[RMDB]
RNA sequence: GGGAACGACUCGAGUAGAGUCGAAAAAGACACAACAACAGAGACCGAAAUUUCUGGGUUGAACUUGGUUCAGGUGCCUGAGAAUUGUGCGAUCCAAGUUCGUGAUGUCAAGAUCCAGGGAUAUACACAUCCACAUUAGAUUCGUCUAAUGUGGAUGAAAAGAAACAACAACAACAAC
Reactivity to 2A3 in 0.01 (KOAc 150mM, MgCl2 10mM, bicine 150mM(pH8.5), 24C), signal-to-noise 7, nucleotides 027 to 126: a000g080a010c030a010c010a070a030c010a070a000c020a040g100a020g030a110c010c060g110a180a150a050u020u020u000c000u010g020g020g010u030u100g010a000a000c000u000u010g020g010u040u030c040a060g090g110u070g130c020c020u140g050a100g090a170a100u200u050g030u040g040c020g010a000u010c000c010a000a010g000u000u010c010g010u100g050a200u130g080u110c050a040a030g040a060u000c000c000a000g060g010g000a020u150a010u050a130c070a000
Reactivity to DMS in 0.01 (KOAc 150mM, MgCl2 10mM, bicine 150mM(pH8.5), 24C), signal-to-noise 9, nucleotides 027 to 126: a080g010a070c020a020c020a060a050c100a080a110c100a100g000a120g010a070c040c040g010a090a110a090u000u000u000c010u000g000g000g020u000u010g000a010a010c010u000u000g000g000u000u000c020a110g030g020u000g020c020c020u000g000a120g010a090a190u010u000g020u000g010c040g000a020u000c000c000a010a020g010u000u000c010g020u010g010a100u010g010u010c140a090a150g000a030u000c000c000a030g000g000g010a030u000a080u010a110c250a170
Chemical mapping of a 177-nucleotide RNA with 2A3 and DMS. Reactivities are given for positions 27 through 126. The data come from the RNA Mapping Database (RMDB), library OK2TRN. The RNA was probed in 150 mM KOAc, 10 mM MgCl2 and 150 mM bicine (pH 8.5) at 24 C. The 2A3 profile rests on 15,720 reads.